[RMDB]
RNA sequence: GGGAACGACUCGAGUAGAGUCGAAAAAGCUAGAAGCAUAAAGUCAGUUUAUAAAGAGCUUAAUGAUAAAAUAGACAGCAUAGAUGUAACAGCAAAAGAUUUGCAACGAUAUUUAAGCUUAUAUUUAUAUCCCUCUAGAAUUCGUUCUAGAGGGAUAAAAAGAAACAACAACAACAAC
Reactivity to DMS in 0.01 (KOAc 150mM, MgCl2 10mM, bicine 150mM(pH8.5), 24C), signal-to-noise 2, nucleotides 027 to 126: a070g020c030u000a060g020a070a130g030c080a040u000a040a050a180g020u020c060a100g010u000u010u000a050u010a100a110a170g000a070g000c010u000u010a070a070u010g020a110u010a060a040a070a040u000a050g010a100c220a030g000c030a100u000a020g000a050u000g010u000a000a020c080a240g000c020a010a020a060a190g000a160u000u010u000g000c010a030a120c300g010a040u000a020u000u000u000a010a060g000c000u000u010a190u000a030u010u000u010a120

Overview
This 177-nucleotide RNA was probed chemically with DMS. The reactions ran in a buffer of 150 mM KOAc, 10 mM MgCl2 and 150 mM bicine (pH 8.5), at 24 C. The DMS profile rests on 1,196 reads. The data come from the RNA Mapping Database (RMDB), library OK2TST. For DMS the reverse transcriptase was MarathonRT.